[RMDB]
RNA sequence: GGGAACGACUCGAGUAGAGUCGAAAAUCCAUCGGUAUAAAAAUCCUCGUAUCCGUUAUGUCUUCCGUUGGAUAUAGAUGGAGGGAAUUGGCAUUUAACAGAUUCACAAAUAGGUGCCUCGGGAUUCCAUACCAUAGAUCCAGUAAAUCCUAAUUCAUAAACAGACUAGAUUCGUCUAGUCUGUUUAAAAAGAAACAACAACAACAAC
Reactivity to DMS in 0.01 (KOAc 150mM, MgCl2 10mM, bicine 150mM(pH8.5), 24C), signal-to-noise 3, nucleotides 027 to 156: u000c010c020a070u000c060g040g060u010a050u000a010a130a060a090a050u000c000c000u010c040g000u000a050u010c010c000g090u000u000a040u010g030u000c030u000u000c040c180g010u000u000g010g070a060u000a040u000a070g060a070u000g030g000a060g040g070g000a060a090u000u010g030g010c010a050u000u000u010a080a100c080a110g020a120u000u000c060a060c050a020a110a190u010a050g010g020u000g020c020c000u000c080g000g040g000a080u010u010c030c190a120u000a040c000c000a170u000a060g010a030u000c000c010a090g000u010a060a030a040u000c020c030u000a050a100u010u000c060a240
Reactivity to 2A3 in 0.01 (KOAc 150mM, MgCl2 10mM, bicine 150mM(pH8.5), 24C), signal-to-noise 3, nucleotides 027 to 156: u020c030c000a060u060c110g020g010u090a070u060a070a130a040a040a030u040c010c010u040c030g020u040a050u010c020c020g020u050u080a040u110g060u040c070u140u050c080c050g100u120u100g000g000a010u020a000u010a110g130a060u110g020g000a020g000g010g000a010a040u050u070g020g000c020a020u040u060u090a100a040c050a080g170a190u210u300c090a030c020a140a110a060u080a080g020g030u010g000c010c010u010c030g050g000g000a010u070u020c020c020a010u030a050c000c000a010u020a040g040a020u010c030c050a000g050u120a010a100a070u020c000c010u030a070a080u110u110c050a030
The record gives the reactivity of an RNA of 207 nucleotides to DMS and 2A3. The RNA was probed in 150 mM KOAc, 10 mM MgCl2 and 150 mM bicine (pH 8.5) at 24 C. Values cover nucleotides 27 to 156. It was measured as part of the RMDB library OK3TST. The 2A3 profile rests on 1,655 reads. For DMS the reverse transcriptase was MarathonRT. For DMS, 5,199 sequencing reads were counted.